[RMDB]
RNA sequence: GGGAACGACUCGAGUAGAGUCGAAAAUUCAACGUUCAAUGUGCCGUCUAUAUCCUCAUCCGGGCAUACACGGACCAAAUGAUCCGCGCUGAAGCAUCGGCACGGAAUAUAAUGGUAAUCAGGUUCGUACAUCCUCACUCCCUUUCCCGUAGUGCGGCGUAGCAUUUUGAUUCGUCAAAAUGCUACGAAAAGAAACAACAACAACAAC
Reactivity to 2A3 in 0.01 (KOAc 150mM, MgCl2 10mM, bicine 150mM(pH8.5), 24C), signal-to-noise 7, nucleotides 027 to 156: u140u080c070a050a020c070g030u040u030c060a090a090u090g030u060g070c020c000g020u010c070u060a140u030a070u190c020c050u050c050a070u030c030c050g020g030g000c030a010u060a070c070a010c010g020g010a020c000c030a070a120a120u210g050a070u010c000c000g020c000g000c040u050g060a130a070g090c050a170u160c020g000g000c010a020c030g010g000a050a030u140a010u040a100a150u100g060g040u090a040a070u140c040a030g010g020u020u020c010g000u010a030c030a060u020c010c000u020c010a020c010u020c010c020c000u010u020u000c000c010c010g020u030a030g030u010g080c050g010g000
Reactivity to DMS in 0.01 (KOAc 150mM, MgCl2 10mM, bicine 150mM(pH8.5), 24C), signal-to-noise 3, nucleotides 027 to 156: u000u000c030a060a110c060g010u010u010c020a080a130u000g040u000g010c000c030g020u000c030u000a130u000a070u000c030c030u010c040a140u000c080c050g010g000g010c050a110u000a030c060a060c020g010g000a030c000c010a060a080a130u000g010a100u000c000c000g010c030g020c020u000g020a090a260g040c140a150u000c010g020g020c000a030c020g010g000a030a080u010a060u000a110a150u000g030g030u000a090a100u000c070a140g010g000u000u000c010g020u000a100c040a090u000c020c010u010c020a060c040u000c030c030c030u010u000u000c020c000c020g010u010a100g020u000g000c030g010g020